[RMDB]
RNA sequence: GGGAACGACUCGAGUAGAGUCGAAAAAAAGACUAAAUGUCCAAUGAUGAGCACAUCAGCUGGAAAAUGGGUAAAUGCUUUAAAUCACUAUGAAGAAAAUCUGUGUGGCAGAAUGGGAGAUGCACAUGUGGGCAUUGUCAGGGGACAGCCCCUGUGAAUAAUAUAUCGAUUUCGAUCGAUAUAUUAUAAAAGAAACAACAACAACAAC
Reactivity to DMS in 0.01 (KOAc 150mM, MgCl2 10mM, bicine 150mM(pH8.5), 24C), signal-to-noise 3, nucleotides 027 to 156: a070a090a110g010a080c030u000a030a060a080u000g010u010c010c010a060a100u010g020a070u000g000a140g040c090a070c020a090u010c030a120g020c040u010g000g000a050a040a100a060u010g020g040g030u010a050a100a060u000g010c020u010u010u000a080a070a120u000c030a040c060u010a100u000g010a090a130g000a110a060a080a080u000c040u010g000u000g020u000g030g000c020a030g000a070a090u000g020g000g020a090g010a070u000g030c020a040c040a040u000g010u000g020g000g010c040a060u010u000g010u020c020a050g000g010g030g020a100c110a100g020c020c000c010c010u000g010u000g010a090
Reactivity to 2A3 in 0.01 (KOAc 150mM, MgCl2 10mM, bicine 150mM(pH8.5), 24C), signal-to-noise 3, nucleotides 027 to 156: a000a000a000g100a020c050u110a160a080a040u140g010u010c010c010a030a030u090g020a020u020g010a040g060c040a040c010a180u050c040a020g060c080u040g030g030a050a070a110a130u160g030g000g030u070a080a100a040u060g060c000u100u080u110a060a150a030u080c020a030c130u100a110u240g070a060a130g050a040a090a020a070u050c060u030g020u010g010u040g100g030c020a010g010a110a020u060g030g030g000a080g040a030u020g030c010a020c000a040u060g040u060g070g020g010c000a020u000u100g020u030c000a000g020g010g030g030a040c040a020g070c010c000c000c000u030g010u000g020a010
An RNA of 207 nucleotides, treated with DMS and 2A3 and read out base by base. The DMS profile rests on 7,430 reads. DMS adducts were read by reverse transcription with MarathonRT. High DMS reactivity at an A or C suggests that its Watson-Crick edge is free. Values cover nucleotides 27 to 156.